[RMDB]
RNA sequence: GGGAACGACUCGAGUAGAGUCGAAAAGAUAUGGAAGACUCAUAAUGGAGAGCGUAGUCGGAAACGACUACAGCUCGAUGAAAUUAUGAGGUCUUCCUAAGUCAAAACAAGGCGUUCGCGCCUUGAAGACCAUAAAGUACUUCGGUACUUUAUGGUCAAAAGAAACAACAACAACAAC
Reactivity to 2A3 in 0.01 (KOAc 150mM, MgCl2 10mM, bicine 150mM(pH8.5), 24C), signal-to-noise 1, nucleotides 027 to 126: g000a010u040a060u130g000g000a010a000g020a020c000u020c020a000u000a010a000u020g030g010a030g010a010g040c010g010u000a000g000u010c000g000g010a040a010a000c000g000a000c000u000a000c020a040g030c000u000c000g000a040u010g010a010a040a000u020u000a000u010g000a030g020g010u000c000u000u000c010c000u010a000a010g000u020c000a000a040a050a170c010a000a000g020g000c000g040u070u130c300g040c020g000c220c010u010u000g000a040a030
Reactivity to DMS in 0.01 (KOAc 150mM, MgCl2 10mM, bicine 150mM(pH8.5), 24C), signal-to-noise 2, nucleotides 027 to 126: g000a010u010a300u010g000g010a020a000g010a110c000u000c000a020u000a000a010u000g010g010a040g020a010g060c010g020u010a010g000u010c020g030g010a070a050a140c010g010a030c000u020a010c010a070g030c000u000c010g000a090u010g000a100a140a010u000u000a010u000g000a040g010g010u010c010u010u000c000c000u000a030a090g010u010c030a110a090a160a300c000a020a010g000g000c000g030u010u020c300g020c010g030c000c010u000u000g000a120a180

The record gives the reactivity of an RNA of 177 nucleotides to 2A3 and DMS. Conditions: 150 mM KOAc, 10 mM MgCl2 and 150 mM bicine (pH 8.5), 24 C. The 2A3 profile rests on 5,113 reads. The DMS profile rests on 2,899 reads. Values cover nucleotides 27 to 126. 2A3 adducts were read by reverse transcription with SuperScript II with manganese.